[RMDB]
RNA sequence: GGGAACGACUCGAGUAGAGUCGAAAAAAGGAAUGUCCGAAAAGUCCGAUUAGGACCACCAAUGUAGGGCUAGACGUCAGUUUAGUGCGGACCGCGGCUACUAAACACUUAAGAGGAAGGCAGUAUAGGUGCAAGCAAGCCGAACGUAACGUCGGACCCAUUUUGUAAUAUUCGUAUUACAAAAUGGAAAAGAAACAACAACAACAAC
Reactivity to 2A3 in 0.01 (KOAc 150mM, MgCl2 10mM, bicine 150mM(pH8.5), 24C), signal-to-noise 9, nucleotides 027 to 156: a010a000g100g000a160a060u090g010u010c010c010g010a040a060a020a030g010u010c010c010g040a110u080u250a090g000g020a020c020c010a040c030c030a090a070u190g020u100a120g030g030g000c010u010a020g010a020c020g040u070c050a090g000u020u030u070a040g000u040g060c040g020g040a040c010c030g050c020g130g020c010u040a030c010u030a040a070a020c050a020c060u140u130a110a030g020a000g060g010a020a020g040g000c010a000g020u060a050u060a100g020g010u020g030c030a030a000g010c020a030a020g020c020c010g040a080a030c040g050u090a100a010c050g030u020c000g020g010a020c000
Reactivity to DMS in 0.01 (KOAc 150mM, MgCl2 10mM, bicine 150mM(pH8.5), 24C), signal-to-noise 4, nucleotides 027 to 156: a070a070g010g000a130a080u010g010u000c030c010g030a040a090a100a100g010u010c010c010g020a280u000u010a170g000g000a040c020c030a110c040c020a090a070u010g040u000a090g010g020g010c030u010a060g010a050c050g010u000c090a110g020u000u000u000a060g020u000g020c040g020g000a070c010c050g030c190g030g010c040u000a070c050u000a040a050a050c040a090c080u020u020a060a130g020a080g020g000a040a060g020g010c020a040g030u000a100u000a040g000g010u000g000c120a110a080g010c040a040a080g000c010c020g010a080a060c080g020u010a080a100c130g020u000c020g010g000a150c120
The record gives the reactivity of an RNA of 207 nucleotides to 2A3 and DMS. DMS (dimethyl sulfate) methylates the pairing face of unpaired adenines and cytosines. For 2A3 the reverse transcriptase was SuperScript II with manganese.